[RMDB]
RNA sequence: GGGAACGACUCGAGUAGAGUCGAAAAGCCAUCCGAGUGGACGUCUGUCCUCCUUCGGAUGCCCAGGUCGGACCGCGGGGAGGUGGAGAUGCCAUGCCGACCCGAAGAGGAAAGAAGGACUCGGACGACCUAUUAGUACCUUCGGGUACUAAUAGGUAAAAGAAACAACAACAACAAC
Reactivity to DMS in 0.01 (KOAc 150mM, MgCl2 10mM, bicine 150mM(pH8.5), 24C), signal-to-noise 3, nucleotides 027 to 126: g010c260c010a130u000c000c010g000a030g010u000g010g000a070c030g000u010c130u000g000u000c010c000u010c090c090u000u000c000g010g010a040u010g000c050c020c020a120g000g010u010c050g000g000a150c050c130g020c050g000g000g010g010a130g010g010u000g010g000a110g000a100u000g000c030c030a090u000g010c020c020g000a090c020c010c010g000a030a050g000a080g000g000a050a040a040g000a050a080g000g000a090c040u000c040g000g010a090c150g000
Reactivity to 2A3 in 0.01 (KOAc 150mM, MgCl2 10mM, bicine 150mM(pH8.5), 24C), signal-to-noise 3, nucleotides 027 to 126: g040c000c000a020u020c010c000g020a020g010u040g020g110a020c010g080u070c120u190g060u000c010c010u010c020c050u050u010c010g020g000a020u030g010c000c000c000a010g000g050u040c030g020g020a060c020c020g000c050g040g010g020g020a050g000g000u040g030g040a110g000a080u170g050c030c010a060u100g030c010c020g010a020c000c000c010g000a030a010g030a030g020g020a040a020a020g010a020a010g030g020a020c000u000c030g010g030a010c030g030

An RNA of 177 nucleotides, treated with DMS and 2A3 and read out base by base. DMS adducts were read by reverse transcription with MarathonRT. Values cover nucleotides 27 to 126. Conditions: 150 mM KOAc, 10 mM MgCl2 and 150 mM bicine (pH 8.5), 24 C. The data come from the RNA Mapping Database (RMDB), library 15KREP.